This 177-nucleotide RNA was probed chemically with 2A3 and DMS. For 2A3 the reverse transcriptase was SuperScript II with manganese. Conditions: 150 mM KOAc, 10 mM MgCl2 and 150 mM bicine (pH 8.5), 24 C. For 2A3, 2,634 sequencing reads were counted. It was measured as part of the RMDB library OK2TST. DMS (dimethyl sulfate) methylates the pairing face of unpaired adenines and cytosines.
[RMDB]
RNA sequence: GGGAACGACUCGAGUAGAGUCGAAAAAGUUAGACACUACAGUGCAGAAUAGUACUGUAUUGGUUAGGUAUUUGUUAAGGGAGGAAAGUACUACUGAACAGACAGAGGCUACCUCAAGCGCCUUCAGCGAGCAGUUUAUAUUCGUAUAAACUGCUCGAAAAGAAACAACAACAACAAC
Reactivity to 2A3 in 0.01 (KOAc 150mM, MgCl2 10mM, bicine 150mM(pH8.5), 24C), signal-to-noise 4, nucleotides 027 to 126: a000g120u140u080a040g020a040c000a000c010u020a000c010a010g000u000g010c020a010g230a300a210u300a180g060u010a010c000u000g000u000a020u010u060g020g030u040u040a030g020g050u050a070u090u200u150g110u110u160a080a060g070g010g040a000g010g070a110a120a030g030u050a160c030u040a100c010u050g020a150a020c040a120g230a050c010a010g060a020g000g000c000u020a020c000c000u040c020a050a060g050c060g060c030c000u080u130c030a030g070
Reactivity to DMS in 0.01 (KOAc 150mM, MgCl2 10mM, bicine 150mM(pH8.5), 24C), signal-to-noise 6, nucleotides 027 to 126: a110g000u000u000a090g000a080c020a040c070u010a010c000a010g010u000g020c000a100g000a180a160u000a100g020u000a010c000u000g010u000a010u000u000g000g010u000u000a050g010g000u000a070u000u000u010g010u000u010a090a100g020g010g000a030g000g000a150a030a040g000u000a050c030u000a090c060u010g010a090a080c210a100g010a110c110a050g000a090g000g000c020u000a060c030c010u000c040a080a120g000c130g010c040c020u000u000c190a100g000